[RMDB]
RNA sequence: GGGAACGACUCGAGUAGAGUCGAAAAGAUAUGGAUCCGUUAAACAGCAACAGCUACAGGGUCGGAAACGACCCGUAGACAUGCUGUGACGGAUCCUAAGUCAAACUUCUUCGUUCGCGAAGAAGAAGCCCAAUUAUUACUUCGGUAAUAAUUGGGCAAAAGAAACAACAACAACAAC
Reactivity to 2A3 in 0.01 (KOAc 150mM, MgCl2 10mM, bicine 150mM(pH8.5), 24C), signal-to-noise 2, nucleotides 027 to 126: g010a010u040a000u070g000g000a000u000c000c000g000u040u090a300a300a120c020a020g080c090a050a150c030a220g050c020u050a000c050a300g010g010g000u000c020g000g000a040a030a000c010g000a010c000c000c000g000u000a010g000a000c000a160u300g020c000u000g020u010g020a000c010g000g000a000u000c000c000u010a000a000g000u000c010a020a100a140c010u020u000c000u020u020c010g090u030u060c300g030c000g180a000a010g010a000a000g020a020a010
Reactivity to DMS in 0.01 (KOAc 150mM, MgCl2 10mM, bicine 150mM(pH8.5), 24C), signal-to-noise 2, nucleotides 027 to 126: g020a040u000a190u000g010g020a020u000c010c020g020u000u010a100a120a300c000a010g010c020a060a030c250a090g000c000u010a010c000a200g040g030g010u010c000g010g030a020a010a110c000g020a040c000c000c010g000u000a010g000a010c050a300u020g000c000u020g000u000g010a020c010g020g020a000u000c010c000u000a010a060g000u000c000a180a120a200c000u000u000c010u000u000c010g050u000u000c270g030c000g010a040a020g010a030a000g000a090a100
An RNA of 177 nucleotides, treated with 2A3 and DMS and read out base by base. The data come from the RNA Mapping Database (RMDB), library TTRDES. For 2A3, 4,356 sequencing reads were counted.